[RMDB]
RNA sequence: GGGAACGACUCGAGUAGAGUCGAAAACAAUCAUGAUUCCGUAUUCUGAUGAUAUUAGAACUUCUAAUUGAUGUCGAUGGUAUGUAUCUAGGAGUAUCUAUUUUAACAAAGCAUCGAUUUGCUAAUACCUAAUACUGAUGUUCGCAUCAGUAUUAGGAAAAGAAACAACAACAACAAC
Reactivity to DMS in 0.01 (KOAc 150mM, MgCl2 10mM, bicine 150mM(pH8.5), 24C), signal-to-noise 8, nucleotides 027 to 126: c080a130a080u010c060a050u000g000a130u000u010c060c080g020u010a080u010u000c060u000g000a080u000g010a110u010a070u000u000a020g010a060a090c090u000u000c010u000a040a120u000u010g010a070u000g010u000c040g010a090u000g010g010u000a080u010g010u010a040u010c050u000a070g010g010a070g020u000a070u010c010u010a030u000u010u010u000a040a080c100a040a060a090g010c010a010u000c140g000a070u000u000u000g010c050u000a040a080u010a130
Reactivity to 2A3 in 0.01 (KOAc 150mM, MgCl2 10mM, bicine 150mM(pH8.5), 24C), signal-to-noise 9, nucleotides 027 to 126: c030a010a080u130c050a070u140g060a080u130u060c050c040g060u100a130u080u090c050u070g070a080u040g020a030u030a070u170u080a020g030a090a070c030u070u000c020u050a110a180u120u110g070a040u100g090u110c060g060a070u080g050g080u180a090u170g040u020a030u020c040u030a010g030g020a040g070u050a150u050c020u010a100u030u110u040u070a080a060c070a060a080a010g040c000a010u040c050g130a110u070u050u100g030c010u040a080a050u060a170
This 177-nucleotide RNA was probed chemically with DMS and 2A3. Values cover nucleotides 27 to 126. The data come from the RNA Mapping Database (RMDB), library OK2TRN. For 2A3 the reverse transcriptase was SuperScript II with manganese.